[RMDB]
RNA sequence: GGGAACGACUCGAGUAGAGUCGAAAAGAUAUGGAAUCGGACCAUUGAGCUACGGAUCGGAAACGAUCCCGUAGCAAUGAUGUGGUCGACGAUUCCUAAGUCAAAGUCUUCGGUUCGCCGAAGACAAGUUAUGUUUCCAGUUCGCUGGAAACAUAACAAAAGAAACAACAACAACAAC
Reactivity to DMS in 0.01 (KOAc 150mM, MgCl2 10mM, bicine 150mM(pH8.5), 24C), signal-to-noise 6, nucleotides 027 to 126: g000a020u000a070u000g000g000a010a010u000c000g000g000a020c000c000a000u000u000g020a300g000c000u010a010c000g010g000a010u000c000g030g010a020a020a050c000g010a000u000c110c030c090g020u000a000g020c010a020a010u010g010a030u020g000u000g000g010u000c000g010a140c020g010a000u010u000c000c000u000a000a060g000u000c010a110a130a160g000u000c000u000u000c000g010g010u010u020c270g030c000c000g000a020a010g010a000c010a020a040
Reactivity to 2A3 in 0.01 (KOAc 150mM, MgCl2 10mM, bicine 150mM(pH8.5), 24C), signal-to-noise 3, nucleotides 027 to 126: g010a010u030a010u070g000g010a000a010u000c010g000g010a000c010c000a020u030u100g060a020g000c000u000a000c020g010g000a000u000c000g000g010a020a000a010c000g000a010u010c080c000c030g000u000a000g020c000a000a010u080g020a030u140g020u010g000g010u020c080g040a070c000g000a010u010u000c000c000u010a020a000g000u000c050a120a090a090g010u000c000u000u000c010g070g000u070u080c300g010c080c000g000a000a000g000a010c000a000a000
The data come from the RNA Mapping Database (RMDB), library TTRDES. This 177-nucleotide RNA was probed chemically with DMS and 2A3. The 2A3 profile rests on 24,828 reads. Conditions: 150 mM KOAc, 10 mM MgCl2 and 150 mM bicine (pH 8.5), 24 C.